[RMDB]
Description:
This 177-nucleotide RNA was probed chemically with DMS. Source: RMDB library OK2TST, as collected in RNAgym. For DMS the reverse transcriptase was MarathonRT. The RNA was probed in 150 mM KOAc, 10 mM MgCl2 and 150 mM bicine (pH 8.5) at 24 C.
RNA sequence: GGGAACGACUCGAGUAGAGUCGAAAACAAUGACAUGCCCCACACCCUUUAAGCCGGAUAGAAGGCUUGAAGCUUGCGGACAGUCACCAUAAUGGCCGGGUGUUGGCUUUAUUCGCAGCGGUAGGCAUCCUCCUGGGAUAUUCGUAUCCCAGGAGGAAAAAGAAACAACAACAACAAC
Reactivity to DMS in 0.01 (KOAc 150mM, MgCl2 10mM, bicine 150mM(pH8.5), 24C), signal-to-noise 2, nucleotides 027 to 126: c090a090a100u000g000a070c130a060u010g010c090c000c060c070a140c080a030c050c060c000u020u000u000a010a060g000c000c000g000g010a200u010a140g000a180a160g000g000c000u010u010g000a010a030g050c060u010u000g050c130g000g000a030c100a040g000u010c040a060c060c060a070u000a120a080u010g010g020c030c030g000g040g010u010g030u010u000g010g010c040u000u010u030a100u010u000c060g040c020a060g010c080g030g000u020a100g000g020c060a110
Values cover nucleotides 27 to 126.